About this RNA: An RNA of 207 nucleotides, treated with 2A3 and read out base by base. Conditions: 150 mM KOAc, 10 mM MgCl2 and 150 mM bicine (pH 8.5), 24 C. The data come from the RNA Mapping Database (RMDB), library OK3TST. Values cover nucleotides 27 to 156. For 2A3, 530 sequencing reads were counted.
RNA sequence: GGGAACGACUCGAGUAGAGUCGAAAACGAUUAAAGCGUGCCCCGGUCCAAUACUGUGUCUGUGUUUGUGUUGCGCAUAAGGCAGUAGUGCCUUAUGGCAGCCAGGGGGAGGCCAGGGCGGCCGCCAGCGCCGCGGGACCGAGGAGCUGCGGGUGCCCAGUCCAGUCUUGUUCGCAAGACUGGACUGAAAAGAAACAACAACAACAAC
Reactivity to 2A3 in 0.01 (KOAc 150mM, MgCl2 10mM, bicine 150mM(pH8.5), 24C), signal-to-noise 1, nucleotides 027 to 156: c010g070a040u190u120a190a130a040g040c010g040u030g040c000c000c000c000g030g010u020c030c010a090a150u060a230c070u080g020u070g040u250c020u000g300u060g240u080u080u070g040u030g040u000u040g000c300g000c050a000u000a000a000g020g000c020a000g070u190a040g160u020g050c010c000u000u000a000u000g000g000c000a000g060c000c000a010g030g010g000g020g000a000g000g000c000c000a010g020g010g000c000g000g020c000c000g100c100c090a070g010c040g000c040c000g040c000g000g000g000a010c010c020g000a150g010g050a080g010c080u050g020c010g000g000g050u050g000c000c000